[RMDB]
RNA sequence: GGGAACGACUCGAGUAGAGUCGAAAAUCGAAAAUAAACAUCGAGUUUACAGGGAACCUCAACUUGACAACUGAUAAAGAGUUUGAUCUAGGUACAAGUAAACUAGAAGCUAUCAACGAACUAUUGACCAUGACGAAUAAUACUCCCUUGUGGGUUGAAAAGACUAGAUGUUCGCAUCUAGUCUUUUAAAAGAAACAACAACAACAAC
Reactivity to DMS in 0.01 (KOAc 150mM, MgCl2 10mM, bicine 150mM(pH8.5), 24C), signal-to-noise 3, nucleotides 027 to 156: u020c020g000a100a060a100a120u010a070a100a080c050a140u010c030g000a070g030u010u000u010a070c050a110g010g010g020a110a070c050c030u000c050a050a060c060u010u010g010a100c050a060a300c090u000g010a080u000a060a120a240g010a110g020u010u000u010g000a070u000c050u000a040g010g000u000a080c040a070a190g020u000a040a030a040c030u010a090g000a060a110g020c050u000a030u000c030a030a220c040g010a060a040c080u010a120u010u010g010a090c070c030a070u000g010a090c040g010a080a070u000a060a080u000a070c070u000c010c000c030u000u000g020u000g000g010g000u010u010g010
Reactivity to 2A3 in 0.01 (KOAc 150mM, MgCl2 10mM, bicine 150mM(pH8.5), 24C), signal-to-noise 2, nucleotides 027 to 156: u060c000g020a000a010a000a130u190a060a100a010c040a060u010c020g010a010g020u030u010u030a050c060a020g030g040g050a060a040c010c000u050c080a060a020c050u060u080g000a060c040a040a030c120u090g040a070u260a150a130a010g100a010g050u060u080u160g010a080u030c070u060a050g010g010u020a040c010a170a000g010u010a130a000a000c000u020a010g070a020a010g070c050u070a010u160c060a030a110c020g120a050a040c060u100a140u110u080g040a020c000c050a030u060g060a030c020g000a000a000u020a070a000u040a040c020u040c010c000c000u030u050g080u120g010g080g000u000u020g020
This 207-nucleotide RNA was probed chemically with DMS and 2A3. For 2A3 the reverse transcriptase was SuperScript II with manganese. For 2A3, 726 sequencing reads were counted. The DMS profile rests on 4,408 reads.